About this RNA
The data come from the RNA Mapping Database (RMDB), library RFM100. Chemical mapping of a 177-nucleotide RNA with 2A3 and DMS. For DMS, 930 sequencing reads were counted. 2A3 adducts were read by reverse transcription with SuperScript II with manganese. The 2A3 profile rests on 2,797 reads. The RNA was probed in 150 mM KOAc, 10 mM MgCl2 and 150 mM bicine (pH 8.5) at 24 C. DMS adducts were read by reverse transcription with MarathonRT.
RNA sequence: GGGAACGACUCGAGUAGAGUCGAAAACCCCAGGUGACCCGAACCUUGGAGGUCACGCCGCUCCCGCGGUGGUUCACCCGCAAGUACGAUUCGCGUCCGGCAGCUCGUACGGUCACUACCCAUGUGAGAGGAAUACCAGGUUCGCCUGGUAUUCCUCAAAAGAAACAACAACAACAAC
Reactivity to 2A3 in 0.01 (KOAc 150mM, MgCl2 10mM, bicine 150mM(pH8.5), 24C), signal-to-noise 4, nucleotides 027 to 126: c000c000c010c000a030g020g010u010g000a010c030c030c070g040a000a000c040c010u010u010g040g000a000g000g000u010c000a000c010g010c010c000g010c010u240c060c070c080g000c000g000g000u000g010g010u020u020c010a050c000c020c010g020c080a070a060g080u040a040c040g020a050u030u190c050g020c010g040u070c030c030g060g030c020a020g000c000u000c020g020u020a040c010g000g000u040c010a000c070u110a100c010c020c000a040u130g000u040g070a100
Reactivity to DMS in 0.01 (KOAc 150mM, MgCl2 10mM, bicine 150mM(pH8.5), 24C), signal-to-noise 1, nucleotides 027 to 126: c050c000c060c020a030g000g000u000g000a080c000c000c300g090a000a010c020c040u000u000g000g000a300g000g000u040c000a000c000g000c030c000g060c090u000c180c180c300g070c150g000g000u000g000g000u000u000c000a160c300c060c100g000c160a000a100g030u030a000c000g000a160u000u050c060g020c000g000u060c090c020g000g050c100a030g000c140u000c030g020u050a110c070g020g000u000c010a000c050u000a150c110c000c140a120u030g000u020g000a050